[RMDB]
Chemical mapping of a 177-nucleotide RNA with 2A3.
Values cover nucleotides 27 to 126.
It was measured as part of the RMDB library RFM100.
The reactions ran in a buffer of 150 mM KOAc, 10 mM MgCl2 and 150 mM bicine (pH 8.5), at 24 C.
2A3 adducts were read by reverse transcription with SuperScript II with manganese.
RNA sequence: GGGAACGACUCGAGUAGAGUCGAAAACCUGGCGCUGGUCUCCGAUCGGUCCUCCAGAGCGCGCGCCACCAUCGCCAAAGCCAGGUCGGCCUCCGCUCGGCUGCCGCCUCUCUACUACCCAUUACAAGUCGACUCGGAAUUUCGAUUCCGAGUCGACAAAAGAAACAACAACAACAAC
Reactivity to 2A3 in 0.01 (KOAc 150mM, MgCl2 10mM, bicine 150mM(pH8.5), 24C), signal-to-noise 1, nucleotides 027 to 126: c000c010u000g060g010c020g010c010u050g000g040u030c030u070c080c030g010a030u030c060g000g090u040c010c010u050c040c000a050g020a000g080c110g000c030g010c000g000c010c000a030c000c000a060u040c070g020c060c000a120a000a000g070c010c020a020g010g080u040c020g030g000c020c000u020c040c040g020c010u040c010g050g010c060u060g040c000c020g000c000c000u000c000u000c000u000a010c020u020a040c000c010c000a010u050u140a170c070a160a060